Conditions: 150 mM KOAc, 10 mM MgCl2 and 150 mM bicine (pH 8.5), 24 C. Chemical mapping of a 207-nucleotide RNA with DMS and 2A3. Values cover nucleotides 27 to 156. For 2A3, 3,116 sequencing reads were counted. For DMS, 3,616 sequencing reads were counted. For DMS the reverse transcriptase was MarathonRT.

[RMDB]
RNA sequence: GGGAACGACUCGAGUAGAGUCGAAAAAGGCAUUUCGAUGCCUAAACCGCGUACUACGAAGCGAUGAAAUAAUCAUCCCACAUCGAUCUUUCCCAAAUAGGAAAGGGAGUGGGUUGAUUAUGGAGCUUCGUAUCGCCAUUAAGAGCUUCGGCUCUAAGACCAGUUCUAAUUUCGAUUAGAACUGGUCAAAAGAAACAACAACAACAAC
Reactivity to DMS in 0.01 (KOAc 150mM, MgCl2 10mM, bicine 150mM(pH8.5), 24C), signal-to-noise 2, nucleotides 027 to 156: a050g000g000c010a050u000u010u010c300g040a040u010g000c070c000u010a010a040a120c030c010g000c040g020u000a060c130u000a010c000g000a020a020g010c000g010a140u000g030a100a100a030u010a010a020u000c030a030u000c000c000c020a000c000a210u000c180g000a100u000c010u000u000u000c000c000c020a050a130a240u000a050g010g000a020a010a000g000g020g000a060g040u010g030g000g000u020u000g000a030u000u000a000u000g010g000a120g000c000u000u000c000g030u000a000u000c020g030c020c060a100u000u000a020a070g070a050g020c020u000u010c300g040g020c000u000c050u010a060a290
Reactivity to 2A3 in 0.01 (KOAc 150mM, MgCl2 10mM, bicine 150mM(pH8.5), 24C), signal-to-noise 5, nucleotides 027 to 156: a000g020g000c020a020u040u100u270c260g090a020u050g010c000c000u020a130a040a020c010c010g010c020g000u080a150c050u000a000c040g010a010a010g030c020g300a300u060g030a030a050a000u000a000a000u010c000a010u020c010c060c000a000c000a140u300c030g100a050u000c020u000u010u010c020c020c020a190a300a250u300a130g000g000a000a000a010g010g010g000a000g000u000g000g010g000u000u000g000a010u000u000a000u000g000g020a020g000c040u000u010c010g000u000a010u060c010g000c020c000a090u190u180a130a030g020a010g000c010u040u100c230g100g000c010u000c020u020a080a000